[RMDB]
RNA sequence: GGGAACGACUCGAGUAGAGUCGAAAACGCCGGCGACCGUCACAAGCUCCGAGGCGAACCAUGGGCGCUGCCCAUGCAGUUUGCGGCUGACUGUGGCUUGUGUCAGCCCGAGUCGCGCGGCAAGAUCAAUUGUACUACUCUUCGGAGUAGUACAAUUAAAAGAAACAACAACAACAAC
Reactivity to 2A3 in 0.01 (KOAc 150mM, MgCl2 10mM, bicine 150mM(pH8.5), 24C), signal-to-noise 9, nucleotides 027 to 126: c040g000c000c000g010g000c000g000a000c010c020g030u030c000a010c000a020a010g000c010u030c040c020g030a020g060g010c010g000a000a000c000c000a010u000g000g000g000c300g110c300u300g010c020c000c010a000u010g000c010a010g020u010u030u210g300c070g130g040c050u050g050a120c040u150g080u140g060g000c000u000u010g000u010g000u020c040a090g070c010c040c010g030a050g020u010c000g000c060g040c000g040g000c010a010a010g040a060u140c040
Reactivity to DMS in 0.01 (KOAc 150mM, MgCl2 10mM, bicine 150mM(pH8.5), 24C), signal-to-noise 9, nucleotides 027 to 126: c170g010c000c010g010g010c010g000a010c020c090g010u000c020a030c020a030a020g010c010u000c150c050g010a300g010g000c010g000a030a020c010c000a010u000g000g010g020c010g030c300u010g010c000c000c010a010u000g000c140a090g010u000u000u000g010c020g010g020c070u010g010a130c140u000g010u010g000g010c010u000u000g020u000g000u010c050a130g010c090c090c050g000a120g010u000c000g010c000g030c010g010g010c020a050a050g000a130u010c120
Description
Source: RMDB library OK2TST, as collected in RNAgym. This 177-nucleotide RNA was probed chemically with 2A3 and DMS. 2A3 adducts were read by reverse transcription with SuperScript II with manganese. DMS (dimethyl sulfate) methylates the pairing face of unpaired adenines and cytosines.